Conditions: 150 mM KOAc, 10 mM MgCl2 and 150 mM bicine (pH 8.5), 24 C. This 177-nucleotide RNA was probed chemically with DMS and 2A3. 2A3 adducts were read by reverse transcription with SuperScript II with manganese.

[RMDB]
RNA sequence: GGGAACGACUCGAGUAGAGUCGAAAAGAUAUGGAAUCAUCUGUACGGAGCAACAGCUGGUCUCGGAAACGAGACCAGACAUGCUCAGUACUGAUUCCUAAGUCAAAGCUUCUCGUUCGCGAGAAGCGAAUUCGAAGUAGUUCGCUACUUCGAAUUCAAAAGAAACAACAACAACAAC
Reactivity to DMS in 0.01 (KOAc 150mM, MgCl2 10mM, bicine 150mM(pH8.5), 24C), signal-to-noise 9, nucleotides 027 to 126: g010a040u000a300u010g000g010a020a000u000c010a080u010c300u020g010u000a000c000g000g000a010g000c000a030a100c300a160g010c000u000g000g000u000c000u000c000g010g000a090a110a210c010g010a010g000a010c000c000a000g010a010c090a160u000g000c000u000c000a050g010u000a000c010u010g010a020u000u000c000c000u010a050a140g010u010c030a090a110a180g000c000u000u010c000u000c000g020u000u010c230g020c010g000a010g000a010a010g010c000
Reactivity to 2A3 in 0.01 (KOAc 150mM, MgCl2 10mM, bicine 150mM(pH8.5), 24C), signal-to-noise 6, nucleotides 027 to 126: g020a030u080a040u200g010g020a000a010u010c020a020u070c140u290g010u010a000c020g040g010a010g000c010a020a160c040a190g070c010u010g000g000u000c010u000c000g030g030a060a060a040c010g000a000g000a000c000c000a000g000a010c000a020u030g010c000u000c010a010g000u000a000c000u010g000a000u000u000c010c000u010a180a010g040u030c070a220a080a070g000c000u010u000c000u000c000g050u090u100c300g000c010g090a000g010a010a010g000c010